[RMDB]
RNA sequence: GGGAACGACUCGAGUAGAGUCGAAAAAUUGACAUCGAUGGAGGAUCGACUGACAUCAACAUGCUCCUCCAGAUUGUCGACAAGCUCGGGAACAUCUCCGAGAAGGCCCGUGCCCGCGUGAAGGAGGAGGUGCACAUGUUUUCGAACAUGUGCACCUAAAAGAAACAACAACAACAAC
Reactivity to 2A3 in 0.01 (KOAc 150mM, MgCl2 10mM, bicine 150mM(pH8.5), 24C), signal-to-noise 1, nucleotides 027 to 126: a020u060u100g020a020c010a000u000c080g180a100u180g000g000a010g050g030a000u080c060g130a080c080u040g030a070c030a170u180c050a030a100c030a040u270g020c020u000c030c000u030c000c000a010g010a000u070u130g040u060c000g010a020c000a040a000g000c000u000c000g000g000g030a000a140c040a170u050c040u030c040c030g070a020g050a020a030g080g020c020c000c000g020u050g050c030c000c010g000c010g000u110g000a080a030g000g030a020g040g080
Reactivity to DMS in 0.01 (KOAc 150mM, MgCl2 10mM, bicine 150mM(pH8.5), 24C), signal-to-noise 1, nucleotides 027 to 126: a100u010u000g010a000c020a050u000c020g000a180u000g030g020a000g000g030a100u010c080g020a140c060u000g000a110c230a030u000c140a100a180c200a080u000g020c100u000c000c000u010c000c000a030g000a110u000u010g000u000c000g020a070c060a260a150g020c000u000c000g000g050g000a080a170c190a210u000c080u000c090c040g000a060g020a100a060g020g030c000c040c030g000u000g010c000c030c000g030c080g000u000g000a140a110g010g000a060g020g020